[RMDB]
RNA sequence: GGGAACGACUCGAGUAGAGUCGAAAAUGGUCUCGCUUGAAAUAAGAUCAGUAUAUGCGCGGGCAUACCAAUAGCCGACAUUGUUUAAAUGGUUUAUUUGAAAUCUCCGCGGGCUGAAAGUAUGCUAAUUUACCUAUCCCUUCGGGGAUAGGUAAAUAAAAGAAACAACAACAACAAC
Reactivity to 2A3 in 0.01 (KOAc 150mM, MgCl2 10mM, bicine 150mM(pH8.5), 24C), signal-to-noise 3, nucleotides 027 to 126: u150g010g010u060c000u010c080g070c030u150u070g150a080a220a210u190a100a110g060a120u070c000a000g070u070a130u080a130u300g170c090g020c010g020g060g020c010a030u040a050c020c010a040a000u060a010g010c010c020g050a060c110a150u090u150g250u180u120u170a070a110a090u060g030g000u050u180u070a060u020u050u100g080a150a080a010u020c020u000c070c040g050c000g010g060g000c040u010g080a010a040a070g090u040a030u100g030c000u030a050
Reactivity to DMS in 0.01 (KOAc 150mM, MgCl2 10mM, bicine 150mM(pH8.5), 24C), signal-to-noise 3, nucleotides 027 to 126: u010g020g000u000c000u000c120g010c150u020u020g000a100a070a090u070a070a070g000a050u000c030a030g000u000a090u040a070u030g000c030g000c090g030g000g030c100a080u000a020c080c070a010a080u030a030g000c000c010g060a160c130a160u030u020g000u040u020u040a030a050a090u010g000g000u010u020u000a040u000u000u010g000a060a030a070u010c050u030c010c070g030c070g010g030g010c010u000g000a080a120a110g010u000a020u010g000c060u010a060
This 177-nucleotide RNA was probed chemically with 2A3 and DMS.
Source: RMDB library OK1LIB, as collected in RNAgym.
DMS adducts were read by reverse transcription with MarathonRT.
The reactions ran in a buffer of 150 mM KOAc, 10 mM MgCl2 and 150 mM bicine (pH 8.5), at 24 C.
2A3 adducts were read by reverse transcription with SuperScript II with manganese.
The 2A3 profile rests on 1,458 reads.